RNA sequence: GGGAACGACUCGAGUAGAGUCGAAAAAGCGCUCAGCGGCAGAUCGGCAACCGCGCCGUCCAGCGAGGGAAGCAUCUGGCUAGUGGCCAGUCCUUCCGGCGUAAUAAUUUGCGGUUCAUCUUCGGCAGUACCCAUCGCCAUUCGUGGCGAUGGGUACAAAAGAAACAACAACAACAAC
Reactivity to 2A3 in 0.01 (KOAc 150mM, MgCl2 10mM, bicine 150mM(pH8.5), 24C), signal-to-noise 1, nucleotides 027 to 126: a000g050c050g040c080u040c150a130g000c010g090g000c040a000g010a050u030c030g000g000c030a040a010c020c000g030c010g020c050c000g100u060c010c010a000g030c000g030a050g020g120g000a060a060g030c100a050u060c000u000g000g010c030u060a080g240u090g160g000c010c010a000g000u010c000c000u000u000c000c000g050g030c000g010u000a000a010u210a100a060u030u040u200g000c060g020g000u000u020c000a030u040c040u060u070c030g000g040c000a060